[RMDB]
RNA sequence: GGGAACGACUCGAGUAGAGUCGAAAACAAAGAGUAUGAGCAAUACUACUCUGACUGUGUCAAAGAAGGAUUCAAAGUAGCUUGCUAUAAAGUUAAAAGGGCUUUUAACAUAGUCCCAAAAGCUCCACACACAGCCCUACUUCGGUAGGGCUGUGUGAAAAGAAACAACAACAACAAC
Reactivity to 2A3 in 0.01 (KOAc 150mM, MgCl2 10mM, bicine 150mM(pH8.5), 24C), signal-to-noise 1, nucleotides 027 to 126: c040a020a150a010g220a070g040u120a060u160g020a000g050c040a060a000u010a300c010u000a000c000u040c020u000g000a000c010u070g000u120g160u200c110a200a130a000g100a250a040g150g060a160u050u050c000a010a010a010g000u000a000g000c070u000u000g000c010u000a010u190a300a030a040g060u060u130a000a000a120a070g000g000g000c010u020u000u040u000a040a020c020a000u150a010g050u060c000c000c000a020a070a020a020g000c000u020c000c000a040
Reactivity to DMS in 0.01 (KOAc 150mM, MgCl2 10mM, bicine 150mM(pH8.5), 24C), signal-to-noise 1, nucleotides 027 to 126: c090a120a020a010g000a060g000u000a000u120g010a020g040c070a060a040u000a100c200u000a000c000u010c000u000g000a050c050u000g000u000g000u010c040a080a100a160g020a100a060g000g000a060u010u040c120a070a090a050g000u000a000g000c300u040u000g000c070u080a050u060a090a040a050g040u000u020a020a060a110a210g000g000g000c000u000u000u000u000a080a050c200a020u000a070g000u000c000c050c000a030a130a060a060g000c020u000c000c280a130

Background:
The record gives the reactivity of an RNA of 177 nucleotides to 2A3 and DMS. 2A3 adducts were read by reverse transcription with SuperScript II with manganese. The 2A3 profile rests on 473 reads. The reactions ran in a buffer of 150 mM KOAc, 10 mM MgCl2 and 150 mM bicine (pH 8.5), at 24 C. Reactivities are given for positions 27 through 126.